[RMDB]
RNA sequence: GGGAACGACUCGAGUAGAGUCGAAAAAUGAGCGAGACCCAGGAAGAGUACGACAAGCGCCAGCAGAAGCGAAAAGUACGAGCGCUUCAGAAAGCUACUGAUAUGAAGUACACCACUGCUCUUCGAGUCAUUGAAGACGGACCAGGCAAUCCGGAUCCACUAUUACGGCAUUCGUGCCGUAAUAGUGAAAAGAAACAACAACAACAAC
Reactivity to DMS in 0.01 (KOAc 150mM, MgCl2 10mM, bicine 150mM(pH8.5), 24C), signal-to-noise 2, nucleotides 027 to 156: a040u000g000a120g000c050g000a140g000a180c040c010c040a250g000g000a070a040g000a160g020u000a040c060g030a120c050a120a160g000c180g030c070c030a070g000c080a230g030a030a140g040c020g010a160a050a040a150g030u000a080c000g000a160g050c070g000c010u020u030c050a130g010a090a180a140g010c030u000a110c040u000g010a100u010a140u000g000a050a060g020u000a060c060a100c030c040a060c000u000g000c030u000c000u000u000c010g090a020g000u000c070a100u010u000g020a030a140g000a130c040g000g000a010c030c030a140g000g050c030a060a080u010c020c000g000g000a130u000c000
Reactivity to 2A3 in 0.01 (KOAc 150mM, MgCl2 10mM, bicine 150mM(pH8.5), 24C), signal-to-noise 2, nucleotides 027 to 156: a000u070g010a010g030c020g000a030g010a080c050c000c010a020g040g020a060a020g020a020g020u050a030c070g020a050c090a110a050g000c020g040c020c020a010g000c070a030g030a110a010g040c030g020a040a080a060a000g060u080a060c110g020a020g040c000g010c010u030u020c010a020g160a080a100a000g020c020u090a030c010u110g040a070u050a050u290g060a050a020g030u020a020c010a000c030c030a030c050u050g000c050u010c000u020u030c010g010a040g010u050c020a100u080u110g060a060a000g030a010c000g010g000a000c040c070a080g040g020c040a030a030u000c020c020g040g000a010u060c010